About this RNA
Source: RMDB library OK2TRN, as collected in RNAgym. This 177-nucleotide RNA was probed chemically with DMS and 2A3. For DMS the reverse transcriptase was MarathonRT. The reactions ran in a buffer of 150 mM KOAc, 10 mM MgCl2 and 150 mM bicine (pH 8.5), at 24 C. The DMS profile rests on 26,768 reads.

RNA sequence: GGGAACGACUCGAGUAGAGUCGAAAAUCUGAACCUAGACAGGAGUUACAUCACCUUGGGGAUCAGUGCAGAGAUACGUGAGAAUUCCCUUGUAGGCAGGGCCUAGACAAGUGUUACAUCACCUAGGCAUUUGCAUAUGUUUCGACAUAUGCAAAUGAAAAGAAACAACAACAACAAC
Reactivity to DMS in 0.01 (KOAc 150mM, MgCl2 10mM, bicine 150mM(pH8.5), 24C), signal-to-noise 9, nucleotides 027 to 126: u010c040u000g010a090a160c030c010u000a060g010a140c130a080g000g010a110g010u000u000a080c120a090u000c080a070c090c040u000u010g010g010g010g010a080u000c040a100g010u000g010c080a070g010a100g010a110u010a040c120g020u000g010a120g000a120a130u000u000c010c000c010u000u010g010u000a050g010g010c060a100g000g020g010c010c010u000a020g000a100c120a070a110g010u000g000u000u010a090c150a080u010c040a050c060c010u000a030g000g010
Reactivity to 2A3 in 0.01 (KOAc 150mM, MgCl2 10mM, bicine 150mM(pH8.5), 24C), signal-to-noise 8, nucleotides 027 to 126: u030c010u030g040a050a060c000c010u020a050g040a090c060a080g010g100a040g050u090u090a060c030a100u100c030a040c040c020u050u060g020g000g010g030a030u020c030a020g040u040g070c040a010g060a010g030a200u070a140c060g050u060g030a070g040a090a080u040u020c010c000c000u000u080g130u040a030g000g030c090a060g100g110g050c000c000u030a020g020a050c100a140a070g010u010g030u080u120a050c050a120u100c010a040c010c000u020a010g030g000